Background: Chemical mapping of a 177-nucleotide RNA with 2A3 and DMS. The data come from the RNA Mapping Database (RMDB), library M2PK50. The RNA was probed in 150 mM KOAc, 10 mM MgCl2 and 150 mM bicine (pH 8.5) at 24 C.
[RMDB]
RNA sequence: GGGAACGACUCGAGUAGAGUCGAAAAUAGGUUGAAUUCGUUCAACCUACAGGCAAGCAAGCACCGCAACGAGACAAGGCGAUAAUAAGAUAGCGCAUGCUGAUACAUCGGUCUUCGGACCGAUGAAGUGACAUAUCACGUUCGCGUGAUAUGUCACAAAAGAAACAACAACAACAAC
Reactivity to 2A3 in 0.01 (KOAc 150mM, MgCl2 10mM, bicine 150mM(pH8.5), 24C), signal-to-noise 2, nucleotides 027 to 126: u020a000g040g010u000u010g000a020a010u080u060c140g050u060u030c010a000a000c000c000u000a040c040a000g000g000c050a040a030g020c010a050a020g000c020a010c020c000g030c020a030a030c030g050a010g030a080c030a040a050g070g030c030g040a030u050a210a080u100a150a070g110a130u100a050g000c050g000c040a020u160g020c020u000g020a030u040a180c000a000u000c010g000g030u000c000u000u020c180g080g000a010c000c000g000a000u000g000a020a000
Reactivity to DMS in 0.01 (KOAc 150mM, MgCl2 10mM, bicine 150mM(pH8.5), 24C), signal-to-noise 2, nucleotides 027 to 126: u000a010g030g020u000u020g010a030a000u010u020c170g000u000u000c000a010a020c020c010u000a030c120a090g020g000c050a050a060g010c120a030a060g020c040a050c070c030g000c050a030a030c060g010a090g000a070c030a030a080g000g000c040g000a060u000a100a040u010a090a080g010a120u000a060g000c020g000c050a070u000g010c040u000g000a120u000a110c020a000u000c000g000g010u000c000u000u020c280g020g010a010c000c000g000a000u000g010a060a050